[RMDB]
RNA sequence: GGGAACGACUCGAGUAGAGUCGAAAAACGUUGCACGCAGUCUCGUGACGUCGGUGAAGCAUGCGAAAGGAUGGUCCGUACGGAAACCAUCCACGCUGGAUGGGAAAGCAUGCACUCCUGGGCAUGCGAAAGGAUGGUCGCCGGCGCCCGUACGGAAACUUAUACUAUUCUUCGGAAUAGUAUAAGUAAAAGAAACAACAACAACAAC
Reactivity to DMS in 0.01 (KOAc 150mM, MgCl2 10mM, bicine 150mM(pH8.5), 24C), signal-to-noise 3, nucleotides 027 to 156: a070c090g010u000u000g010c010a100c100g000c060a210g000u010c040u010c050g010u000g020a050c040g000u010c010g000g010u000g020a100a250g000c050a080u000g030c000g030a090a160a110g000g020a090u000g010g020u000c010c030g040u010a080c050g020g010a130a070a090c000c000a010u010c010c020a010c130g020c120u000g010g000a050u000g020g010g000a110a110a160g010c010a010u000g000c000a080c050u000c060c070u000g010g020g020c000a050u010g010c000g000a060a100a090g000g010a100u010g000g000u010c030g030c030c000g040g020c010g010c080c000c010g030u010a020c040g020g010a130a160
Reactivity to 2A3 in 0.01 (KOAc 150mM, MgCl2 10mM, bicine 150mM(pH8.5), 24C), signal-to-noise 4, nucleotides 027 to 156: a010c040g030u050u070g040c050a020c070g050c040a070g050u020c050u030c100g080u070g080a070c020g010u020c010g000g030u030g040a040a020g050c020a010u070g000c010g090a180a050a030g050g030a040u090g010g050u030c010c020g030u070a060c050g000g000a070a100a010c000c000a000u000c000c000a010c020g040c070u100g070g000a060u060g030g020g000a040a040a060g000c000a000u020g020c020a060c060u050c000c040u070g020g050g040c020a020u050g010c010g040a030a020a010g070g010a070u090g060g060u050c000g010c010c000g020g000c020g020c010c000c000g020u030a010c020g000g000a070a000
Conditions: 150 mM KOAc, 10 mM MgCl2 and 150 mM bicine (pH 8.5), 24 C. This 207-nucleotide RNA was probed chemically with DMS and 2A3. The 2A3 profile rests on 3,434 reads. It was measured as part of the RMDB library OK3TST. DMS adducts were read by reverse transcription with MarathonRT.